The record gives the reactivity of an RNA of 177 nucleotides to DMS. The RNA was probed in 150 mM KOAc, 10 mM MgCl2 and 150 mM bicine (pH 8.5) at 24 C. Values are in units of 0.01, from 0 to 300, in steps of 10.
RNA sequence: GGGAACGACUCGAGUAGAGUCGAAAAGUUAUAAGUGCAACUUCUAUGUGGUUAAGUUUUGAGCUUGGUGACAACCGUCAACCACAUGGACCAAGCUGGCACCAUUACCUGUCCAAACCAGGGCCUAUCACAACAUGCCAUUCGUGGCAUGUUGUGAAAAAGAAACAACAACAACAAC
Reactivity to DMS in 0.01 (KOAc 150mM, MgCl2 10mM, bicine 150mM(pH8.5), 24C), signal-to-noise 2, nucleotides 027 to 126: g020u000u010a080u000a160a080g010u010g030c020a110a100c030u000u000c000u000a030u000g050u010g000g000u010u000a020a020g030u000u020u070u010g010a160g010c030u010u000g000g000u000g040a160c100a060a140c220c170g040u020c090a030a040c020c030a010c000a010u000g000g000a160c300c060a080a030g010c050u010g000g000c030a020c010c100a070u020u000a080c040c010u000g020u000c080c140a050a030a100c230c080a060g000g000g010c080c050u010a230
Background
DMS adducts were read by reverse transcription with MarathonRT.